[RMDB]
RNA sequence: GGGAACGACUCGAGUAGAGUCGAAAAGUGAUGGGGCUUGCUUUCAGCGCUCUUCAGAUCUCUGAAAAGAGUCGGUGCAUUCAUUAAAGCUACGUAAUGCGACGAUCUUGUUUGCAGCUGAUACCGCCUAGAGCCAUGCAUUCGUGCAUGGCUCUAGAAAAGAAACAACAACAACAAC
Reactivity to 2A3 in 0.01 (KOAc 150mM, MgCl2 10mM, bicine 150mM(pH8.5), 24C), signal-to-noise 3, nucleotides 027 to 126: g070u080g000a060u040g000g000g020g000c040u040u060g000c010u000u120u110c020a000g020c020g010c020u010c000u070u010c020a030g040a150u040c050u000c000u080g070a010a010a050a070g040a060g080u060c000g000g000u040g000c010a000u000u060c000a020u000u300a120a020a140g050c050u070a060c030g080u160a030a080u040g000c000g010a000c010g040a050u020c110u050u100g040u140u140u100g050c050a040g060c020u020g000a020u040a100c070c050g050c000
Reactivity to DMS in 0.01 (KOAc 150mM, MgCl2 10mM, bicine 150mM(pH8.5), 24C), signal-to-noise 2, nucleotides 027 to 126: g020u040g000a060u000g000g010g020g000c050u010u020g000c080u000u010u000c060a040g010c040g000c070u000c090u050u020c010a040g020a060u010c100u020c020u000g000a060a020a110a140g000a050g010u020c010g000g000u000g000c020a030u010u020c050a160u010u050a010a150a110g000c130u040a080c190g020u030a030a010u010g000c050g030a070c030g000a030u020c050u010u020g000u000u020u000g000c010a030g020c030u010g000a020u020a150c050c020g000c130